[RMDB]
RNA sequence: GGGAACGACUCGAGUAGAGUCGAAAAGAAAGAAAGUACUGAAAGUAUUGUGGGAAAUAAUGUGUAAAUCAUUGACCGUUCCUGCGCUGGUAAGAGUAAAAUUUUAGUCCAGACACCACCAGUAUAACCAAUCUAGUGACCUUCGGGUCACUAGAAACUCAUUGAGUGAGUUCGCUCACUCAAUGAGAAAAGAAACAACAACAACAAC
Reactivity to DMS in 0.01 (KOAc 150mM, MgCl2 10mM, bicine 150mM(pH8.5), 24C), signal-to-noise 2, nucleotides 027 to 156: g000a110a090a090g000a040a110a150g030u000a130c010u020g010a100a060a220g020u000a040u000u000g010u010g010g010g000a060a100a080u000a000a010u020g020u000g000u010a070a090a290u000c000a060u020u000g020a080c040c030g000u000u000c020c010u000g010c100g010c020u000g010g000u000a040a050g000a100g010u010a030a030a050a160u010u040u000u000a160g000u010c020c030a100g010a140c050a040c000c010a030c070c000a060g030u010a060u010a050a160c030c060a060a140u000c000u000a000g010u010g010a040c010c000u000u010c300g060g000g030u000c000a000c000u000a000g000a010a060a090
Conditions: 150 mM KOAc, 10 mM MgCl2 and 150 mM bicine (pH 8.5), 24 C. Chemical mapping of a 207-nucleotide RNA with DMS. It was measured as part of the RMDB library M2RFPK. The DMS profile rests on 2,701 reads.